[RMDB]
RNA sequence: GGGAACGACUCGAGUAGAGUCGAAAAGGGGUCGCAUCGAUAAGGGACGUGAGAAGCGCAGAUACAUACUGAAGCCUCCACGGUAUGAGUAGCUUCCCGUCCCUUUUGACGAUGCGACGGAGGCACCCAAAGCGCUCCUAUGUUCGCAUAGGAGCGCGAGAUAAAAGAAGUUCGCUUCUUUUAUCUCAAAAGAAACAACAACAACAAC
Reactivity to 2A3 in 0.01 (KOAc 150mM, MgCl2 10mM, bicine 150mM(pH8.5), 24C), signal-to-noise 2, nucleotides 027 to 156: g000g020g080g030u000c000g010c010a010u000c000g060a090u110a300a040g000g000g000a010c030g060u190g060a300g000a070a010g000c020g030c300a010g000a010u020a010c000a000u000a010c010u050g040a130a020g020c010c000u000c000c000a000c020g000g000u010a000u000g000a010g010u020a010g000c000u010u000c000c010c030g000u020c030c000c000u000u010u010u010g010a020c010g000a000u010g000c010g000a000c010g000g000a000g000g000c020a030c000c010c030a070a130a030g010c000g010c000u010c000c000u010a000u000g060u050u110c300g000c180a000u000a000g010g000a000g010c000g000c000